The data come from the RNA Mapping Database (RMDB), library RFMREP. The record gives the reactivity of an RNA of 177 nucleotides to 2A3 and DMS. For DMS the reverse transcriptase was MarathonRT. The reactions ran in a buffer of 150 mM KOAc, 10 mM MgCl2 and 150 mM bicine (pH 8.5), at 24 C. For DMS, 1,174 sequencing reads were counted.

RNA sequence: GGGAACGACUCGAGUAGAGUCGAAAACAGUCUUAUACACUAUGGUAAGCCUGUAAUUAAAUAGUAUAAGCAAUGUUUAAUUAUAUUACUAGCCUUAGAUGAAAAUUAGUUGCCUACAGUGCUACCCGUGGCUAAUAUAGUUCGCUAUAUUAGCCACAAAAGAAACAACAACAACAAC
Reactivity to 2A3 in 0.01 (KOAc 150mM, MgCl2 10mM, bicine 150mM(pH8.5), 24C), signal-to-noise 1, nucleotides 027 to 126: c040a010g020u050c000u000u000a010u010a000c020a000c020u060a100u270g020g000u030a140a050g020c000c010u010g000u000a010a010u000u000a040a010a030u010a010g000u000a010u040a110a000g000c000a060a000u010g000u000u020u030a050a020u030u050a090u040a000u120u170a010c000u020a010g030c000c000u190u020a090g080a300u180g040a170a090a050a120u130u040a000g050u060u050g060c000c000u000a010c000a030g010u030g120c000u000a010c000c020c020
Reactivity to DMS in 0.01 (KOAc 150mM, MgCl2 10mM, bicine 150mM(pH8.5), 24C), signal-to-noise 1, nucleotides 027 to 126: c130a070g010u000c000u000u000a020u000a040c030a010c010u000a080u010g010g020u000a050a130g000c030c050u000g000u000a000a000u000u000a010a020a000u000a000g000u000a050u000a020a020g000c010a050a000u000g000u000u000u000a000a000u000u000a130u010a130u000u000a090c030u000a130g000c110c080u000u000a070g030a100u010g000a070a060a070a100u000u000a050g010u000u000g010c110c070u000a050c030a010g000u000g000c030u000a050c010c020c300